[RMDB]
RNA sequence: GGGAACGACUCGAGUAGAGUCGAAAAGCGAUACGGAAAGCAGAUCGCCGAAGGGACGCCGACCGGCUCUUGGUUCCUGAUCAAAGGCUGGAAGCUCAGCGGCAUCGACAUGUUCAUCGUGAAGGCCCGUAAAUGAUUAGUUCGCUAAUCAUUUACGAAAAGAAACAACAACAACAAC
Reactivity to 2A3 in 0.01 (KOAc 150mM, MgCl2 10mM, bicine 150mM(pH8.5), 24C), signal-to-noise 9, nucleotides 027 to 126: g010c010g010a010u070a090c080g040g070a120a050a010g040c070a060g020a060u050c100g000c000c000g040a050a050g140g040g020a030c090g030c060c020g100a180c010c020g010g000c010u020c010u040u030g020g010u050u050c040c100u180g020a010u030c030a040a020a000g020g010c000u010g020g010a030a020g000c010u000c030a020g040c010g010g000c000a010u020c010g050a040c010a050u170g030u070u080c030a030u030c030g010u010g050a130a050g110g030c010c010
Reactivity to DMS in 0.01 (KOAc 150mM, MgCl2 10mM, bicine 150mM(pH8.5), 24C), signal-to-noise 9, nucleotides 027 to 126: g010c020g010a040u010a090c110g010g010a090a110a130g020c140a120g010a040u010c130g020c010c020g010a090a080g010g000g010a060c120g020c080c060g010a190c070c020g010g010c010u000c040u000u000g010g000u000u000c160c140u010g010a040u000c060a030a040a060g000g010c010u000g000g020a300a120g010c030u000c040a080g000c030g000g000c020a040u000c020g000a070c100a060u010g000u000u000c070a040u000c030g010u000g000a090a130g010g010c020c030

The data come from the RNA Mapping Database (RMDB), library OK2TST.
Chemical mapping of a 177-nucleotide RNA with 2A3 and DMS.
Reactivities are given for positions 27 through 126.
The reactions ran in a buffer of 150 mM KOAc, 10 mM MgCl2 and 150 mM bicine (pH 8.5), at 24 C.